[RMDB]
RNA sequence: GGGAACGACUCGAGUAGAGUCGAAAAGAUAUGGAUCGCGGUCUGGGAGGCAAAGAUGGCUAAGACAGAUUUCGGAAACGAAAUUCGAGCCAUCAUUUGCCGACGAUCAGACCGCGAUCCUAAGUCACAAAAACCAAUACUUCGGUAUUGGUUUUUGAAAAGAAACAACAACAACAAC
Reactivity to DMS in 0.01 (KOAc 150mM, MgCl2 10mM, bicine 150mM(pH8.5), 24C), signal-to-noise 2, nucleotides 027 to 126: g000a070u010a300u000g010g000a030u000c010g020c000g000g000u000c000u010g020g000g020a070g000g040c010a000a010a030g000a010u000g010g010c010u010a190a160g020a190c300a100g000a020u000u000u000c000g020g000a100a110a130c020g000a030a000a010u000u000c100g020a000g010c000c010a000u000c000a030u000u000u010g010c030c000g000a080c200g000a060u000c010a010g000a010c020c000g020c000g000a000u010c000c000u000a000a060g000u000c010a180